An RNA of 177 nucleotides, treated with DMS and 2A3 and read out base by base. Conditions: 150 mM KOAc, 10 mM MgCl2 and 150 mM bicine (pH 8.5), 24 C.
RNA sequence: GGGAACGACUCGAGUAGAGUCGAAAACUCGAAAGAGACCUGCAUAUCUUAGGCAGAUGAGCAAGUCCCGUCUGAAAAGCGAAAGCCCUAAGAUAUGCAGCUGUGAUGACUUGCCGCAGAAAAUAAACCAUGAGGAUGCAUUCGUGCAUCCUCAUGGAAAAGAAACAACAACAACAAC
Reactivity to DMS in 0.01 (KOAc 150mM, MgCl2 10mM, bicine 150mM(pH8.5), 24C), signal-to-noise 1, nucleotides 027 to 126: c030u000c000g000a050a050a090g000a040g000a120c300c000u000g000c000a020u000a000u000c000u020u000a010g000g000c050a000g000a000u000g010a300g060c040a030a020g000u060c000c090c050g020u010c010u000g000a100a030a110a110g000c010g050a180a130a210g000c010c000c010u000a060a000g010a000u000a000u000g000c010a000g000c020u030g020u000g010a140u010g010a020c070u000u000g000c030c000g000c040a070g000a150a130a070a080u030a060a090a110
Reactivity to 2A3 in 0.01 (KOAc 150mM, MgCl2 10mM, bicine 150mM(pH8.5), 24C), signal-to-noise 4, nucleotides 027 to 126: c010u010c010g020a020a020a040g080a000g050a050c000c010u000g000c000a000u000a000u000c000u000u010a000g020g000c010a000g000a020u020g010a000g000c020a010a020g010u010c090c110c000g010u000c010u020g060a250a230a090a010g010c000g050a090a010a010g010c000c000c000u010a000a000g000a000u000a000u000g000c000a000g000c000u000g000u010g030a210u150g010a020c010u000u000g000c020c000g010c010a010g050a030a090a000a040u190a070a100a030
For 2A3, 3,637 sequencing reads were counted.